The data come from the RNA Mapping Database (RMDB), library RFM100. Chemical mapping of a 177-nucleotide RNA with 2A3.
RNA sequence: GGGAACGACUCGAGUAGAGUCGAAAAGAAAGAAAGAAAGACGACUUUUCGUGGUUGGUGGUUGAACUUCGAUUUUAAGUAUUUAAAUAAAAUGAAAUCUGUUCAUUCUCCGACACAAGAAGUUCAAGUUCUAAUCACGCUUCGGCGUGAUUAGAACAAAAGAAACAACAACAACAAC
Reactivity to 2A3 in 0.01 (KOAc 150mM, MgCl2 10mM, bicine 150mM(pH8.5), 24C), signal-to-noise 2, nucleotides 027 to 126: g070a000a110a000g020a000a070a030g150a090a050a030g100a030c050g010a010c020u000u000u020u060c060g020u040g080g110u080u020g000g010u000g010g000u010u020g000a000a000c000u230u210c170g000a000u020u000u010u020a100a070g040u010a190u090u120u180a150a300a090u250a020a010a000a040u060g030a020a000a000u000c010u020g010u000u010c000a000u070u030c000u000c000c000g000a000c000a000c010a000a000g000a000a000g010u060u120c050a040a000
Conditions: 150 mM KOAc, 10 mM MgCl2 and 150 mM bicine (pH 8.5), 24 C.